An RNA of 207 nucleotides, treated with 2A3 and read out base by base.

RNA sequence: GGGAACGACUCGAGUAGAGUCGAAAACGAGUAGCUGGGACCACAGGCACGCACCAUUAUGCCUGGCUAAUUUUUUUUAUGUUUUGAAGAGACAGGGCCUCCCUGUAUUGCCCAGGCUGGUCUAGAACUCCUGGGCUCAAGAGAUCCUCCCACCUCAGGUUAGGAAUGGAUUCGUCCAUUCCUAACCAAAAGAAACAACAACAACAAC
Reactivity to 2A3 in 0.01 (KOAc 150mM, MgCl2 10mM, bicine 150mM(pH8.5), 24C), signal-to-noise 1, nucleotides 027 to 156: c020g000a020g000u020a000g000c030u000g000g000g000a080c000c000a050c040a040g020g000c030a050c130g040c030a070c060c040a080u070u030a030u290g010c000c000u000g020g000c000u050a060a130u070u140u170u010u060u070u120u140a200u270g020u000u040u110u130g000a060a070g020a000g000a050c010a040g000g000g060c030c000u170c000c030c000u010g060u050a180u150u120g030c000c000c000a000g000g060c110u160g010g010u070c050u110a070g050a110a050c020u000c020c020u010g000g010g010c000u010c000a040a020g020a000g000a000u110c030c000u050c050c030c030a010c020c020u070c080a020

It was measured as part of the RMDB library OK3TST. The reactions ran in a buffer of 150 mM KOAc, 10 mM MgCl2 and 150 mM bicine (pH 8.5), at 24 C.